Record summary:
Source: RMDB library M2PK50, as collected in RNAgym. This 177-nucleotide RNA was probed chemically with 2A3 and DMS. 2A3 adducts were read by reverse transcription with SuperScript II with manganese. For DMS the reverse transcriptase was MarathonRT. Values cover nucleotides 27 to 126. Values are in units of 0.01, from 0 to 300, in steps of 10. For DMS, 1,464 sequencing reads were counted.
RNA sequence: GGGAACGACUCGAGUAGAGUCGAAAACGAUUAGCAUUCGUGCUAAUCGAAUCAGGUAGUACCUAUCACUAUUACCUGUAGUGGCCAACGUCCGGACAGAGAAUCGAGUCCUGUUCGCAGGACUCAAGAAACGGGUUGUAUUCGUACAACCCGUUUCAAAAGAAACAACAACAACAAC
Reactivity to 2A3 in 0.01 (KOAc 150mM, MgCl2 10mM, bicine 150mM(pH8.5), 24C), signal-to-noise 1, nucleotides 027 to 126: c010g010a010u010u020a010g000c000a020u000u040c190g100u080g000c010u010a000a010u000c000g010a000a080u090c020a020g070g000u010a010g000u020a060c020c040u120a070u280c040a030c060u040a020u040u040a020c010c030u010g000u040a040g030u060g040g040c010c030a070a050c080g050u050c020c000g050g000a060c030a020g150a020g060a150a100u210c140g000a010g010u020c000c000u020g000u050u060c200g000c050a010g000g000a000c000u000c000a000a000
Reactivity to DMS in 0.01 (KOAc 150mM, MgCl2 10mM, bicine 150mM(pH8.5), 24C), signal-to-noise 2, nucleotides 027 to 126: c010g010a010u000u000a010g000c000a050u000u030c170g030u000g010c010u000a000a000u000c000g000a060a080u010c020a000g000g000u000a020g000u000a020c130c140u010a110u000c220a090c300u010a030u000u000a030c000c010u020g020u000a080g020u000g000g000c030c000a060a080c120g020u010c040c040g020g000a040c070a070g010a120g010a100a100u000c130g020a020g000u000c000c000u000g010u000u000c170g000c010a010g000g010a030c010u020c010a050a080